Chemical mapping of a 177-nucleotide RNA with DMS. DMS adducts were read by reverse transcription with MarathonRT. For DMS, 1,537 sequencing reads were counted.

RNA sequence: GGGAACGACUCGAGUAGAGUCGAAAAGAUAUGGAAGUCAUGUCGACCGUGUUUGACCGAUAAGCGUACAUCGGAAACGAUGUGACGCUUUUGACGGUUGAUACGGUCGACAUGACUUCCUAAGUCACUUCUGUAUGUCGUUCGCGACAUACAGAAGAAAAGAAACAACAACAACAAC
Reactivity to DMS in 0.01 (KOAc 150mM, MgCl2 10mM, bicine 150mM(pH8.5), 24C), signal-to-noise 1, nucleotides 027 to 126: g010a000u020a300u010g000g010a000a000g020u000c000a010u000g000u000c000g000a020c000c010g050u000g020u000u000u010g060a000c010c000g030a180u000a040a000g050c000g020u000a020c000a010u000c020g020g010a110a130a200c000g010a010u000g010u000g000a030c020g030c000u000u000u010u010g030a140c100g010g010u010u010g000a010u000a000c000g010g000u000c000g010a000c000a000u000g000a000c000u000u000c000c020u000a000a080g000u000c030a260